[RMDB]
RNA sequence: GGGAACGACUCGAGUAGAGUCGAAAAUCAGAAUCAGGCCGGAGUGUUUAGCGCUCCGUAAACACGGUCGUACAUCCAGCCGGUAGCCUGGUUCGUUGCAUUGAGUGAUGUACGGAGUUUAUAGAGCAAAAGAAAGACCUGUUCGCAGGUCUUUCAAGUAUCGUCUCAUCUUCGGAUGAGACGAUACAAAAGAAACAACAACAACAAC
Reactivity to 2A3 in 0.01 (KOAc 150mM, MgCl2 10mM, bicine 150mM(pH8.5), 24C), signal-to-noise 1, nucleotides 027 to 156: u080c000a000g000a000a000u000c000a000g000g020c030c000g000g010a020g000u010g010u130u200u300a110g090c000g010c010u030c000c000g000u030a030a010a000c100a000c080g000g000u040c010g010u040a010c040a010u000c030c030a020g040c000c080g000g000u020a000g020c000c000u000g000g000u000u010c000g000u030u070g080c060a090u010u140g060a020g060u130g030a010u070g010u020a000c030g000g000a090g010u130u120u060a220u110a070g100a030g000c060a000a000a000a170g000a000a000a000g000a000c000c000u020g060u120u140c300g000c100a000g000g020u000c020u000u000u000c000a010a000

Conditions: 150 mM KOAc, 10 mM MgCl2 and 150 mM bicine (pH 8.5), 24 C. The record gives the reactivity of an RNA of 207 nucleotides to 2A3. For 2A3, 464 sequencing reads were counted. For 2A3 the reverse transcriptase was SuperScript II with manganese.